[RMDB]
RNA sequence: GGGAACGACUCGAGUAGAGUCGAAAAACACUAGAAAUAUUAACUUGCUGUAAAGCAUCCUACUGCCAGCGGAAUCACAUCUGGUAACAGAUGCCUCUGGGGCCAAAAGCCAAGGUUUAGCAGACCCCUUAAAAGCGAGUUUCGACUCGCUUUUAAGAAAAGAAACAACAACAACAAC
Reactivity to DMS in 0.01 (KOAc 150mM, MgCl2 10mM, bicine 150mM(pH8.5), 24C), signal-to-noise 3, nucleotides 027 to 126: a090c060a080c110u030a120g000a110a090a110u020a110u030u010a030a140c100u030u010g000c020u000g000u030a060a140a080g000c060a020u010c030c040u000a100c120u010g010c070c020a010g000c120g000g010a090a030u020c190a280c030a020u010c010u000g000g000u040a110a080c020a010g000a010u010g000c040c020u010c050u000g020g000g000g060c050c040a060a050a080a210g000c000c020a050a050g000g010u000u010u000a080g000c080a120g000a130c010c010c050
Reactivity to 2A3 in 0.01 (KOAc 150mM, MgCl2 10mM, bicine 150mM(pH8.5), 24C), signal-to-noise 5, nucleotides 027 to 126: a000c020a020c020u070a040g140a050a140a060u250a070u200u150a120a050c030u030u100g010c020u020g090u170a100a120a040g030c010a050u060c020c010u040a120c060u040g060c020c000a040g010c010g030g020a080a090u160c040a030c000a050u010c000u010g020g000u020a080a000c000a020g000a000u020g000c010c010u020c000u020g030g000g030g040c000c000a040a070a000a020g000c010c000a040a030g070g010u050u060u070a010g010c010a020g000a140c020c000c000